The data come from the RNA Mapping Database (RMDB), library TTRINS. The record gives the reactivity of an RNA of 177 nucleotides to 2A3 and DMS. The reactions ran in a buffer of 150 mM KOAc, 10 mM MgCl2 and 150 mM bicine (pH 8.5), at 24 C.
[RMDB]
RNA sequence: GGGAACGACUCGAGUAGAGUCGAAAAGAUAUGGAAUAGAACUACGUGUCGCUACGACUUGGAUUUAAUACAACCUCGGAAACGAGGUUGUAUUUGUCAGUCGUAAAAGUCACGCUAUUCCUAAGUCCGAAAGUAAAAGGUUCGCCUUUUACUUUCGAAAAGAAACAACAACAACAAC
Reactivity to 2A3 in 0.01 (KOAc 150mM, MgCl2 10mM, bicine 150mM(pH8.5), 24C), signal-to-noise 4, nucleotides 027 to 126: g060a030u180a070u250g000g010a000a000u020a020g040a170a110c170u190a080c300g020u010g020u060c040g030c220u000a000c010g020a010c030u050u140g180g000a060u300u300u140a010a000u010a010c000a000a000c010c000u020c010g040g000a110a070a050c000g000a000g000g000u010u000g000u000a000u010u010u000g010u010c010a000g000u000c000g020u000a000a070a010a020g000u010c010a000c010g000c010u020a010u000u000c000c000u010a110a030g090u060c050
Reactivity to DMS in 0.01 (KOAc 150mM, MgCl2 10mM, bicine 150mM(pH8.5), 24C), signal-to-noise 6, nucleotides 027 to 126: g010a100u010a300u000g010g000a020a020u000a020g000a130a100c190u010a300c030g020u000g000u000c010g020c300u000a010c000g010a010c000u000u010g020g010a040u000u010u000a010a010u010a000c000a010a010c000c000u000c000g010g000a100a090a210c010g020a010g010g000u000u000g000u000a000u000u000u000g000u000c010a030g000u000c000g010u010a010a050a120a150g000u000c000a010c010g010c010u000a010u000u000c000c000u000a070a130g000u010c050